An RNA of 207 nucleotides, treated with DMS and 2A3 and read out base by base.
The 2A3 profile rests on 8,023 reads.
The RNA was probed in 150 mM KOAc, 10 mM MgCl2 and 150 mM bicine (pH 8.5) at 24 C.
DMS adducts were read by reverse transcription with MarathonRT.
It was measured as part of the RMDB library M2RFPK.
The DMS profile rests on 7,345 reads.

[RMDB]
RNA sequence: GGGAACGACUCGAGUAGAGUCGAAAAUCACCAGAUGCUGCAUCACCUGAUCACUGAUGGCUCAACGGUAUCCGGCGGUACAACUGAAUACUUGUACCUGCCUUUUGAGCGGGUUGGCUGCAAUCCGAAAAGAGGACACACUUCGGUGUGUCCUCAACUAUUCAUAUGUCUUCGGACAUAUGAAUAGAAAAGAAACAACAACAACAAC
Reactivity to DMS in 0.01 (KOAc 150mM, MgCl2 10mM, bicine 150mM(pH8.5), 24C), signal-to-noise 3, nucleotides 027 to 156: u000c030a050c020c010a080g020a050u000g010c030u000g030c010a100u000c100a030c020c010u010g010a160u000c120a140c170u000g000a120u000g000g010c020u000c010a080a150c080g020g000u000a050u000c010c040g010g030c000g030g020u000a080c030a040a080c040u000g010a120a110u000a080c100u000u000g010u000a030c010c010u010g040c010c010u010u000u000u010g010a080g020c000g030g000g030u000u000g020g000c070u010g020c020a130a140u010c040c020g000a080a060a100a160g050a020g020g000a010c000a020c010a010c000u010u000c280g040g000u010g030u000g020u000c000c000u000c000a000a050
Reactivity to 2A3 in 0.01 (KOAc 150mM, MgCl2 10mM, bicine 150mM(pH8.5), 24C), signal-to-noise 7, nucleotides 027 to 156: u070c010a020c030c000a010g010a040u020g010c030u010g010c010a030u040c020a060c010c010u040g050a060u090c030a030c080u080g030a050u070g100g020c040u030c080a060a090c070g060g010u080a080u060c060c020g020g010c020g000g020u010a010c020a040a020c040u190g100a160a080u140a210c040u040u020g000u000a000c000c020u060g000c000c000u060u050u060u060g040a020g020c030g000g000g000u040u040g060g010c050u090g010c030a020a080u020c020c020g040a060a050a010a040g000a000g000g010a000c000a000c000a000c010u070u100c250g040g000u000g000u000g000u000c000c000u000c000a000a000